[RMDB]
Chemical mapping of a 207-nucleotide RNA with DMS and 2A3.
RNA sequence: GGGAACGACUCGAGUAGAGUCGAAAAUGUAGGUAGCCAAGCACAUUGAAAGUUUAAAAAUACAGCAAAAUAAUUCUCUGGAUUGUGUUAUUAUGCCUUUAAUGCAUUCAGUUAACAUUUGGAGCUUUGUCACCAGAUAAACGGUGCACAUUGGUGCAUACCGGACCAUAUUCGUAUGGUCCGGUAUAAAAGAAACAACAACAACAAC
Reactivity to DMS in 0.01 (KOAc 150mM, MgCl2 10mM, bicine 150mM(pH8.5), 24C), signal-to-noise 2, nucleotides 027 to 156: u000g030u010a090g030g020u000a070g030c030c040a040a160g030c050a050c030a030u010u010g010a080a060a070g010u000u000u000a010a050a090a090a100u000a090c040a060g030c030a060a080a110a110u000a050a090u000u010c020u000c050u000g000g020a070u010u010g000u000g020u000u010a060u010u010a060u010g010c050c050u000u000u000a060a040u000g000c000a050u000u010c060a150g010u000u000a060a060c080a110u000u000u000g000g000a170g030c050u010u000u020g010u000c020a090c010c010a110g000a080u010a060a070a070c040g020g010u000g020c020a030c060a160u010u000g000g010u000g010c100
Reactivity to 2A3 in 0.01 (KOAc 150mM, MgCl2 10mM, bicine 150mM(pH8.5), 24C), signal-to-noise 3, nucleotides 027 to 156: u130g010u040a030g060g000u020a010g000c000c010a040a000g010c010a020c030a060u030u140g050a100a070a060g050u050u160u280a160a160a020a000a010u180a060c070a020g050c020a060a030a140a050u090a050a140u240u000c050u010c020u080g030g010a080u070u080g010u000g030u070u000a050u060u040a040u170g060c050c000u110u120u080a050a000u060g000c010a000u020u070c010a030g040u050u070a090a040c020a110u020u050u110g090g030a040g020c000u040u050u100g070u080c000a010c020c000a000g000a100u110a030a110a040c050g030g000u040g020c020a010c000a050u080u110g030g020u040g030c050
Conditions: 150 mM KOAc, 10 mM MgCl2 and 150 mM bicine (pH 8.5), 24 C.